[RMDB]
RNA sequence: GGGAACGACUCGAGUAGAGUCGAAAAGGGAGGUUGACUCCCCGGCGCCAAAAGGCCCUGGCCCAACUAGGCGCUCAUCGAAUGAACACACAAGAGAAUGAAUGUAAGGUCAGCUGGUGGGACAGUGCAGUGAUGAGAAGUUCGCUUCUCAUUAUUGAAAAGAAACAACAACAACAAC
Reactivity to 2A3 in 0.01 (KOAc 150mM, MgCl2 10mM, bicine 150mM(pH8.5), 24C), signal-to-noise 2, nucleotides 027 to 126: g020g020g010a020g020g020u190u210g120a110c020u000c000c000c010c000g020g000c020g030c010c000a010a030a000a070g040g000c020c020c030u090g100g000c000c000c000a120a070c160u110a120g050g000c020g000c000u000c040a100u000c000g000a080a140u190g080a120a010c080a020c010a010c030a160a040g050a020g040a140a060u060g010a030a010u060g020u090a070a000g050g000u020c020a010g000c020u030g000g020u030g040g000g020a020c010a010g010u020g100
Reactivity to DMS in 0.01 (KOAc 150mM, MgCl2 10mM, bicine 150mM(pH8.5), 24C), signal-to-noise 2, nucleotides 027 to 126: g000g000g000a010g000g030u020u050g000a220c020u000c000c000c000c080g010g010c100g030c010c020a070a100a100a120g010g010c000c040c040u020g010g000c000c000c000a300a220c300u000a290g000g000c020g000c000u000c090a130u000c020g000a300a290u020g000a060a060c100a080c140a050c070a040a020g000a070g000a040a020u010g010a040a040u000g010u020a040a060g000g000u000c010a050g000c010u000g000g010u010g000g000g010a070c040a040g010u010g000